RNA sequence: GGGAACGACUCGAGUAGAGUCGAAAAGAAAGAAAGAAAGAAACCGUCUCUGCUAGUCUCACGGUAACCACGUUGAAAUCGCAACGAAAGAAGCUCGCACUCUACUUCAACGGCUUAACGAGUGCAAAAAACUUACUGAUCUUCGGAUCAGUAAGAACAGUACUAGUAUCUUCGGAUACUAGUACUGAAAAGAAACAACAACAACAAC
Reactivity to DMS in 0.01 (KOAc 150mM, MgCl2 10mM, bicine 150mM(pH8.5), 24C), signal-to-noise 2, nucleotides 027 to 156: g000a160a100a100g000a110a100a150g000a130a150a150g030a100a070a060c060c020g000u000c010u010c030u010g000c030u000a100g000u010c060u010c000a090c020g000g010u000a080a120c040c070a070c070g000u000u000g000a060a100a110u000c070g000c030a020a080c010g020a050a100a040g010a110a040g000c040u000c090g030c020a000c010u000c000u000a110c010u010u000c030a070a070c070g000g000c060u000u000a010a090c220g000a060g000u000g000c010a030a030a050a080a050a110c000u000u000a010c000u000g000a020u000c000u000u010c300g030g030a020u000c010a000g020u000a000a000g000a020a090
Reactivity to 2A3 in 0.01 (KOAc 150mM, MgCl2 10mM, bicine 150mM(pH8.5), 24C), signal-to-noise 4, nucleotides 027 to 156: g050a030a090a000g080a040a100a030g040a050a170a010g020a100a060a030c030c020g040u010c040u000c010u090g040c020u040a020g040u090c030u020c060a040c020g020g010u050a050a070c030c020a010c050g000u020u030g080a100a140a110u200c120g000c090a020a030c020g040a050a020a130g020a030a000g010c070u110c150g000c010a000c000u000c010u040a040c010u000u030c020a070a020c040g030g010c000u040u020a030a010c040g010a010g010u020g000c030a000a080a060a000a010a030c000u000u000a000c000u000g010a000u000c020u020u040c110g060g000a000u000c000a000g000u000a000a000g000a000a010

Structure probing data (DMS and 2A3) for a 207-nucleotide construct. Reactivities are given for positions 27 through 156. For 2A3 the reverse transcriptase was SuperScript II with manganese. The RNA was probed in 150 mM KOAc, 10 mM MgCl2 and 150 mM bicine (pH 8.5) at 24 C. It was measured as part of the RMDB library M2RFPK. The 2A3 profile rests on 3,563 reads. For DMS, 3,442 sequencing reads were counted.